[RMDB]
RNA sequence: GGGAACGACUCGAGUAGAGUCGAAAAAUGAUGAUUCGUGCCACUGCGAAUCCACUCUGCGACAUACGUCGAGACGAGCUCGACCACUAGCGCUAAAGUUUGGAUUCGUCUUCGGACGAAUCCAAACGCCAAAUGCAAUCUUCGGAUUGCAUUUGGCAAAAGAAACAACAACAACAAC
Reactivity to 2A3 in 0.01 (KOAc 150mM, MgCl2 10mM, bicine 150mM(pH8.5), 24C), signal-to-noise 3, nucleotides 027 to 126: a000u110g030a040u180g010a000u000u000c030g000u050g160c130c110a170c140u140g000c000g010a010a020u000c010c000a060c020u010c020u090g010c010g080a140c060a060u050a020c180g160u000c000g010a010g030a050c080g020a030g090c000u020c030g020a010c020c020a050c070u040a040g030c020g000c110u110a160a120a030g010u000u000u020g000g000a000u000u000c000g000u000c000u020u010c060g110g000a000c000g000a000a010u000c010c030a020a000a000c010
Reactivity to DMS in 0.01 (KOAc 150mM, MgCl2 10mM, bicine 150mM(pH8.5), 24C), signal-to-noise 2, nucleotides 027 to 126: a080u010g010a100u020g000a030u000u000c010g020u010g000c100c120a090c170u000g000c020g010a020a000u000c020c070a060c050u000c020u000g010c020g000a110c040a070u010a010c100g010u000c020g000a050g020a240c180g010a070g020c010u010c010g000a060c060c030a020c180u000a060g020c080g020c080u010a040a120a140g000u000u010u010g000g010a010u000u000c000g000u000c000u010u010c240g040g000a010c000g020a000a000u000c000c000a000a000a000c010